[RMDB]
RNA sequence: GGGAACGACUCGAGUAGAGUCGAAAACUUGACGACAUGAUGAAAUUCGCAAAGUCAACUCCGUUUGCUUACCCUGACUUAGUUACAUCAAGUCGUAACUUAGUAGCGUUCGGGUUUAAAGCCAAAGAGACUAUUCCUUUAAUGCAAACCCUCGGUGAAUAGAACGACUAUUCGUAGUCGUUCUAUUAAAAGAAACAACAACAACAAC
Reactivity to DMS in 0.01 (KOAc 150mM, MgCl2 10mM, bicine 150mM(pH8.5), 24C), signal-to-noise 5, nucleotides 027 to 156: c040u000u000g010a120c020g010a090c100a080u000g010a130u010g010a110a050a150u000u000c080g020c060a070a090a100g020u000c030a080a090c030u010c030c030g020u000u010u000g020c040u000u010a070c020c030c010u000g010a060c020u000u000a070g010u000u000a070c010a090u000c060a090a170g010u010c070g020u000a020a050c010u000u000a050g020u000a100g000c050g010u000u000c090g020g000g010u000u000u000a050a060a100g020c000c100a060a110a180g010a150g010a110c070u000a120u000u000c030c010u000u000u010a090a100u010g010c030a080a070a070c020c010c030u000c050g040g010u010g000
Reactivity to 2A3 in 0.01 (KOAc 150mM, MgCl2 10mM, bicine 150mM(pH8.5), 24C), signal-to-noise 9, nucleotides 027 to 156: c020u030u080g030a020c030g020a010c020a110u130g020a070u060g080a120a110a180u190u100c050g010c090a100a060a020g010u020c020a020a080c020u030c030c080g050u030u040u060g020c020u050u070a060c000c000c020u030g020a010c000u020u020a010g010u010u020a010c010a090u160c130a190a110g150u140c080g000u050a000a010c000u010u040a010g010u020a030g110c050g100u110u120c040g020g020g000u040u070u100a070a030a000g010c010c010a040a050a010g040a010g020a040c040u080a080u040u070c010c000u100u100u150a140a090u160g040c030a070a060a120c030c020c020u050c100g090g040u130g040